An RNA of 177 nucleotides, treated with DMS and 2A3 and read out base by base.
RNA sequence: GGGAACGACUCGAGUAGAGUCGAAAACAAGGCGGAUUCGUCCGCCUUGGGUGCGUAGCUGCGUAAUUUUAAUAGGUACGCUUAAUAAAUUUAAAUUACGCAAUGUGGGGGCUUUCGAGCCCCCAAAGACAAGUUCAUUGUUCGCAAUGAACUUGUCAAAAGAAACAACAACAACAAC
Reactivity to DMS in 0.01 (KOAc 150mM, MgCl2 10mM, bicine 150mM(pH8.5), 24C), signal-to-noise 2, nucleotides 027 to 126: c020a000a000g010g020c000g000g000a050u000u020c210g030u010c010c000g030c020c000u000u000g000g000g010u000g020c030g030u000a060g010c110u010g000c010g010u000a000a010u010u010u000u010a030a180u000a140g000g000u000a010c050g020c030u000u020a040a060u010a060a090a110u010u000u010a040a040a020u000u000a010c000g000c010a090a090u030g010u000g030g010g010g010g000c000u010u000u010c100g010a040g010c010c000c000c000c000a010a000a020
Reactivity to 2A3 in 0.01 (KOAc 150mM, MgCl2 10mM, bicine 150mM(pH8.5), 24C), signal-to-noise 1, nucleotides 027 to 126: c000a000a010g000g030c020g010g000a020u000u070c110g070u010c080c000g040c010c000u000u000g000g010g000u060g000c000g040u070a050g120c090u070g000c000g010u010a010a000u000u120u060u120a210a130u150a090g140g000u020a000c030g010c000u040u110a110a090u080a190a180a060u080u100u090a000a010a000u020u000a010c010g000c030a030a040u080g000u010g030g000g000g040g010c010u100u010u040c080g040a010g010c000c000c000c000c010a000a000a000